[RMDB]
RNA sequence: GGGAACGACUCGAGUAGAGUCGAAAAUGGGUAAGCCAACAACAUCCAGACGUGAUGUGUAUAGAACGUGUAGAGAUCACGCUACCCGUGUACGUGCAACUGGUAAUUAAAAUGAAAAGUAAUAUUCAUGUGUAGUGUCAAUUUUAAAUGAUGAUGACCCAACUAACAUCUUCGGAUGUUAGUUGGGAAAAGAAACAACAACAACAAC
Reactivity to 2A3 in 0.01 (KOAc 150mM, MgCl2 10mM, bicine 150mM(pH8.5), 24C), signal-to-noise 4, nucleotides 027 to 156: u180g010g010g010u030a130a030g020c050c010a030a010c040a010a010c010a040u010c030c030a070g140a170c080g100u150g040a010u020g020u010g040u040a030u060a160g080a050a010c030g010u030g000u060a010g030a000g010a180u110c020a010c050g020c000u010a030c010c020c000g020u020g000u020a040c040g010u030g060c010a050a020c050u020g010g030u040a050a070u080u140a050a100a030a090u110g050a020a010a050a070g060u070a010a130u080a030u160u100c030a050u030g060u010g040u070a050g030u000g020u080c020a020a060u020u030u150u230a090a210a100u140g070a040u030g020a020u050g020a020
Reactivity to DMS in 0.01 (KOAc 150mM, MgCl2 10mM, bicine 150mM(pH8.5), 24C), signal-to-noise 2, nucleotides 027 to 156: u010g040g000g010u010a050a140g010c020c020a120a110c060a050a080c000a050u000c020c000a120g000a130c040g020u020g020a040u000g010u000g000u010a080u000a110g010a170a120c050g000u000g020u000a090g010a100g010a100u000c050a070c020g020c010u000a060c000c020c050g010u000g030u000a030c070g020u000g030c020a040a180c060u000g000g040u000a040a110u000u000a000a080a060a100u000g000a060a060a060a150g010u010a050a050u000a130u000u000c020a040u000g010u010g010u000a080g010u010g000u010c070a040a070u000u000u000u000a030a090a130u000g010a070u010g010a070u000g010a200

Structure probing data (2A3 and DMS) for a 207-nucleotide construct. DMS adducts were read by reverse transcription with MarathonRT. The data come from the RNA Mapping Database (RMDB), library OK3TST. For DMS, 4,185 sequencing reads were counted. The RNA was probed in 150 mM KOAc, 10 mM MgCl2 and 150 mM bicine (pH 8.5) at 24 C.